[RMDB]
RNA sequence: GGGAACGACUCGAGUAGAGUCGAAAAAAGCCGACUCCGGCGCUGCCGUGCAACUGAGUUUGGCGCCCGUCGGCGGGCAGCCGUUUAGCUUGGAUGCCAACCUGGACACCGUCGGUGUCGUCGACGGGGUGGGACAGGAAUUCGUUCCUGUCCCACCAAAAGAAACAACAACAACAAC
Reactivity to 2A3 in 0.01 (KOAc 150mM, MgCl2 10mM, bicine 150mM(pH8.5), 24C), signal-to-noise 1, nucleotides 027 to 126: a020a020g020c000c010g020a000c000u050c040c010g050g000c030g040c020u060g000c020c020g070u110g020c010a100a070c030u070g040a020g160u060u140u260g030g000c000g030c000c000c000g130u170c100g090g070c160g000g030g000c030a020g010c000c010g070u130u110u230a040g060c010u030u120g010g000a010u030g040c000c050a010a120c040c070u070g080g010a090c030a000c050c010g070u030c020g060g000u010g040u010c020g020u030c010g010a010c040g000g080
Reactivity to DMS in 0.01 (KOAc 150mM, MgCl2 10mM, bicine 150mM(pH8.5), 24C), signal-to-noise 1, nucleotides 027 to 126: a090a100g010c010c000g000a040c010u010c100c100g000g020c130g050c130u000g000c090c000g030u000g000c100a040a190c050u000g020a060g000u010u010u000g020g000c070g010c040c000c090g010u010c120g010g000c030g020g000g020c010a060g020c000c010g010u010u000u010a120g030c150u000u010g010g020a110u010g010c030c080a080a150c090c170u020g020g010a050c040a030c040c000g020u000c110g050g020u010g030u000c000g020u000c000g000a040c050g000g000